[RMDB]
RNA sequence: GGGAACGACUCGAGUAGAGUCGAAAAAUCACGUGCUGACGCACGAGCUUGCCUCGUAACGAGUGAAUUGAUGCAUGCCGAAAUUGACUGACCGGAAUGCGGGUGUCUGACACUAGCAAUAUCGGUCGUUUGUACUUAAUUUCGAUUAAGUACAAACAAAAGAAACAACAACAACAAC
Reactivity to DMS in 0.01 (KOAc 150mM, MgCl2 10mM, bicine 150mM(pH8.5), 24C), signal-to-noise 9, nucleotides 027 to 126: a050u010c070a130c070g020u000g010c010u000g020a120c180g000c100a030c020g010a060g010c060u010u010g010c090c010u000c040g020u010a120a110c110g010a080g010u010g000a070a090u010u010g000a080u010g000c060a040u010g000c020c030g000a040a070a070u020u030g010a120c110u020g010a020c000c000g000g010a150a090u000g000c020g010g010g000u000g000u000c130u020g010a050c010a010c000u000a140g010c010a030a070u020a070u010c000g000g000u000c030
Reactivity to 2A3 in 0.01 (KOAc 150mM, MgCl2 10mM, bicine 150mM(pH8.5), 24C), signal-to-noise 9, nucleotides 027 to 126: a000u120c050a030c040g030u040g010c040u170g110a080c130g010c010a010c010g010a020g010c030u070u100g020c010c010u020c020g070u090a110a050c070g020a040g070u120g090a100a110u070u100g030a040u050g020c030a010u050g030c010c020g080a060a060a060u110u130g090a100c050u060g000a010c000c010g000g050a060a020u030g000c020g020g040g000u010g020u030c270u220g070a020c000a000c010u030a030g000c010a030a060u040a080u230c000g000g000u010c010